RNA sequence: GGGAACGACUCGAGUAGAGUCGAAAAGCAAAAGAUUAUCCAGGUGUAGCGGUGAAAUUCGUAGAGAUCUGGUGGAUAAUGAACCGGUGGCGAAGGCGAAAGAUAACCGCUCAAAAGAAGAAUUGAAACUAAGGAGUAGCUUCGGCUACUCCUUAGUAAAAGAAACAACAACAACAAC
Reactivity to DMS in 0.01 (KOAc 150mM, MgCl2 10mM, bicine 150mM(pH8.5), 24C), signal-to-noise 2, nucleotides 027 to 126: g010c100a080a050a050a100g040a100u010u010a050u000c000c000a060g000g050u030g020u010a050g080c020g000g020u010g040a050a130a130u000u000c020g000u020a120g000a050g020a240u020c020u020g010g010u000g000g060a100u000a090a100u010g030a130a020c050c000g020g000u010g020g020c300g020a080a050g000g010c050g020a070a050a020g000a060u000a090a040c040c010g020c020u000c000a060a040a080a100g030a080a040g000a070a150u000u000g000a120a090
Source information:
Structure probing data (DMS) for a 177-nucleotide construct. Conditions: 150 mM KOAc, 10 mM MgCl2 and 150 mM bicine (pH 8.5), 24 C. Values cover nucleotides 27 to 126.